[RMDB]
RNA sequence: GGGAACGACUCGAGUAGAGUCGAAAACGGCAAAAAAGCAAACUUGACCACCAAGGAUAAAAGAGAUCUUAUCCAAGGAUGCAAAAGAUAAUCUCACUUUUGACACACACUGAUCUCGAACUUAAAGAAAACCGAGACUACUUCGGUAGUCUCGGAACGUCUCUCAUCUGUUCGCAGAUGAGAGACGAAAAGAAACAACAACAACAAC
Reactivity to 2A3 in 0.01 (KOAc 150mM, MgCl2 10mM, bicine 150mM(pH8.5), 24C), signal-to-noise 2, nucleotides 027 to 156: c040g030g010c050a060a060a040a050a010a070g070c070a130a110a100c130u150u120g060a150c010c010a020c000c000a070a030g020g020a040u020a050a040a060a010g030a000g000a000u000c010u020u080a040u040c020c010a030a050g080g000a060u080g010c000a020a020a000a020g050a040u120a150a160u100c070u050c100a030c040u020u050u020u130g080a040c010a010c000a000c000a020c130u130g000a000u020c000u000c010g020a080a070c070u120u170a100a010a040g070a060a040a130a040c010c010g000a000g000a000c000u000a000c020u050u080c230g050g000u000a000g020u000c020u000c000g000g000a000a000
An RNA of 207 nucleotides, treated with 2A3 and read out base by base. The data come from the RNA Mapping Database (RMDB), library M2RFPK. The reactions ran in a buffer of 150 mM KOAc, 10 mM MgCl2 and 150 mM bicine (pH 8.5), at 24 C.